Chemical mapping of a 177-nucleotide RNA with DMS and 2A3. It was measured as part of the RMDB libraries RFM100 and RFMREP.
RNA sequence: GGGAACGACUCGAGUAGAGUCGAAAAUUCAAUUACUGAACAAUACUGUUGCAGUGAAUAGUUUGGAUGUGAACUUAGGUUUAAGUGUAUUGUAAAUACACCGCACCAUCUAGGAGAACAGAGUUUAAGACGACUAUUUGUUCGCAAAUAGUCGUCUAAAAGAAACAACAACAACAAC
Reactivity to DMS in 0.01 (KOAc 150mM, MgCl2 10mM, bicine 150mM(pH8.5), 24C), signal-to-noise 3, nucleotides 027 to 126: u000u000c030a150a190u040u000a050c040u010g000a040a040c040a070a150u020a100c190u010g020u000u000g010c030a050g000u010g030a220a110u000a010g000u000u000u020g010g000a150u000g040u000g010a000a000c010u000u040a120g010g010u000u000u000a060a080g010u000g010u000a000u000u000g000u010a040a020a010u000a010c000a000c000c000g000c020a050c010c020a010u010c020u000a020g000g010a140g020a050a040c130a080g000a120g020u000u010u000a100
Reactivity to 2A3 in 0.01 (KOAc 150mM, MgCl2 10mM, bicine 150mM(pH8.5), 24C), signal-to-noise 3, nucleotides 027 to 126: u030u030c030a030a070u120u090a090c030u040g000a020a010c030a040a080u180a290c120u080g030u060u090g070c030a040g000u040g110a070a070u030a030g110u020u040u060g150g050a260u040g010u010g010a000a000c010u040u050a190g100g060u040u000u030a010a010g000u020g030u000a010u030u060g280u160a070a000a000u000a000c000a000c000c010g000c000a010c010c010a000u000c000u020a000g010g100a140g050a110a010c020a020g120a030g020u020u020u100a060